RNA sequence: GGGAACGACUCGAGUAGAGUCGAAAAUGCAACACUCCUGUCUGUGUUGCAAACACAAGUUCUGAGAGAUGUCAUCCACGAGCAGGAUGAAACCCCCUCGUACAAAAAGGCCAUUCAUGAAUGUAGACAUUAUUAGUCCAUUCGUGGACUAAUAAUGAAAAGAAACAACAACAACAAC
Reactivity to DMS in 0.01 (KOAc 150mM, MgCl2 10mM, bicine 150mM(pH8.5), 24C), signal-to-noise 9, nucleotides 027 to 126: u000g010c010a010a010c010a010c010u010c090c120u000g010u010c080u010g010u000g010u010u000g010c010a010a070a100c150a080c180a100a110g010u000u000c030u000g010a120g010a090g000a110u010g020u010c020a030u000c020c020a090c130g000a090g030c150a090g000g000a040u000g010a030a080a230c040c030c010c040c010u000c040g010u010a060c110a030a050a050a060a050g000g010c050c040a070u000u000c070a060u010g000a070a050u000g010u000a080g010a240
Reactivity to 2A3 in 0.01 (KOAc 150mM, MgCl2 10mM, bicine 150mM(pH8.5), 24C), signal-to-noise 9, nucleotides 027 to 126: u030g000c000a010a010c000a010c010u100c040c070u180g150u230c060u060g000u020g000u000u010g010c000a000a090a000c070a010c010a030a080g040u080u020c040u100g050a040g000a010g010a130u110g050u100c010a020u010c020c010a040c060g050a060g040c110a050g030g010a030u030g030a080a040a060c010c000c000c020c010u020c020g050u060a050c050a020a090a010a010a000g040g000c020c010a020u040u040c020a030u130g090a070a010u100g020u060a020g010a030